[RMDB]
RNA sequence: GGGAACGACUCGAGUAGAGUCGAAAAAACUACUUCUUCGGAAGUAGUUAUUGCGUGGGUCUUAUAAGCCCAAGGUGCCAGGUUCGACCCUUGCUGGGCGCAUCACCGACCGAUUCGUCGGUCGGAAACAUUGUCAUGGUUUCGACCAUGACAAUGUAAAAGAAACAACAACAACAAC
Reactivity to DMS in 0.01 (KOAc 150mM, MgCl2 10mM, bicine 150mM(pH8.5), 24C), signal-to-noise 4, nucleotides 027 to 126: a030a000c000u000a000c000u000u000c000u000u020c210g030g000a010a000g010u000a010g010u000u000a020u000u010g010c100g030u000g000g000g020u000c020u010u010a090u000a120a190g010c000c010c020a050a070g010g010u000g020c020c040a150g000g000u000u000c090g000a150c030c000c000u000u000g020c050u000g020g010g010c030g020c080a060u010c110a200c000c000g000a000c000c000g010a020u000u000c170g000u000c010g000g000u010c000g000g000a040a060
Reactivity to 2A3 in 0.01 (KOAc 150mM, MgCl2 10mM, bicine 150mM(pH8.5), 24C), signal-to-noise 2, nucleotides 027 to 126: a000a000c000u000a010c000u010u000c010u020u050c290g040g010a010a000g000u000a000g000u000u010a110u050u110g030c010g010u080g030g000g000u010c030u060u210a140u040a250a060g000c000c000c000a000a010g080g020u060g030c010c020a040g000g020u030u090c030g050a110c010c000c000u020u070g000c030u040g010g030g020c030g000c020a020u070c040a000c020c000g030a010c000c000g000a010u000u030c130g060u010c000g060g000u000c000g020g000a000a000

This 177-nucleotide RNA was probed chemically with DMS and 2A3. Conditions: 150 mM KOAc, 10 mM MgCl2 and 150 mM bicine (pH 8.5), 24 C. The DMS profile rests on 5,104 reads. For 2A3, 3,637 sequencing reads were counted.